An RNA of 207 nucleotides, treated with 2A3 and read out base by base. 2A3 adducts were read by reverse transcription with SuperScript II with manganese. Values cover nucleotides 27 to 156.
RNA sequence: GGGAACGACUCGAGUAGAGUCGAAAAAACUCAGCUAGGGAGAGUAUAACAUUCAUGUUGACGAGACCUAGACGAAACACAGAGGAAAAUUAUUAAUCACUGGAUAGUAUUAGUAAUGAAUCUGUGUAAAACUCUUCUACGUUCGCGUAGAAGAGAAGACGGGUAAAGAGUUCGCUCUUUACCCGUCAAAAGAAACAACAACAACAAC
Reactivity to 2A3 in 0.01 (KOAc 150mM, MgCl2 10mM, bicine 150mM(pH8.5), 24C), signal-to-noise 2, nucleotides 027 to 156: a000a000c010u010c000a030g000c000u000a000g000g010g000a010g010a010g060u060a130u100a300a000c050a010u070u240c080a090u300g060u040u060g020a030c040g030a000g030a120c000c000u000a010g010a030c030g010a000a020a020c000a000c000a000g030a010g000g050a050a220a100a000u000u000a000u000u010a010a000u000c060a000c030u030g180g040a180u300a300g010u030a000u000u000a000g000u010a000a010u010g000a000a050u000c010u010g020u000g000u010a020a020a000a000c010u030c000u000u000c000u000a010c010g030u010u050c170g000c000g120u030a000g000a010a000g000a000g000a010a000